Description:
Chemical mapping of a 177-nucleotide RNA with DMS and 2A3. It was measured as part of the RMDB library TTRDES. Conditions: 150 mM KOAc, 10 mM MgCl2 and 150 mM bicine (pH 8.5), 24 C. For 2A3 the reverse transcriptase was SuperScript II with manganese.
RNA sequence: GGGAACGACUCGAGUAGAGUCGAAAAGAUAUGGAGACUCACAGGGAGAAAUGUAUCGGAAACGAUACCAUUUCAUCGAUCUGUAGGUCUCCUAAGUCAAACGCUCCAAUGUUCGCAUUGGAGCGAAGACAUGAUUAAGCUUCGGCUUAAUCAUGUCAAAAGAAACAACAACAACAAC
Reactivity to DMS in 0.01 (KOAc 150mM, MgCl2 10mM, bicine 150mM(pH8.5), 24C), signal-to-noise 3, nucleotides 027 to 126: g000a050u000a180u000g000g000a020g000a030c010u000c100a020c000a010g000g020g020a130g000a010a000a020u000g000u000a000u000c010g010g000a050a020a100c000g000a010u000a000c300c260a030u000u000u000c000a260u010c290g000a130u010c010u000g000u000a020g000g000u000c000u010c000c000u000a000a090g020u000c000a130a130a210c040g010c000u000c000c000a000a010u000g020u000u020c260g020c000a010u010u000g000g000a020g020c000g000a010a030
Reactivity to 2A3 in 0.01 (KOAc 150mM, MgCl2 10mM, bicine 150mM(pH8.5), 24C), signal-to-noise 3, nucleotides 027 to 126: g000a000u030a010u090g010g000a010g000a000c010u030c140a020c030a030g100g050g030a270g010a060a010a010u020g000u000a000u010c000g010g000a030a010a000c000g000a020u010a010c070c010a030u000u010u000c100a180u300c090g140a160u030c010u000g040u050a050g040g030u000c000u000c000c000u000a000a000g010u000c020a100a060a130c020g010c000u000c000c000a010a010u030g030u120u150c300g020c240a010u010u010g020g020a000g000c000g000a000a010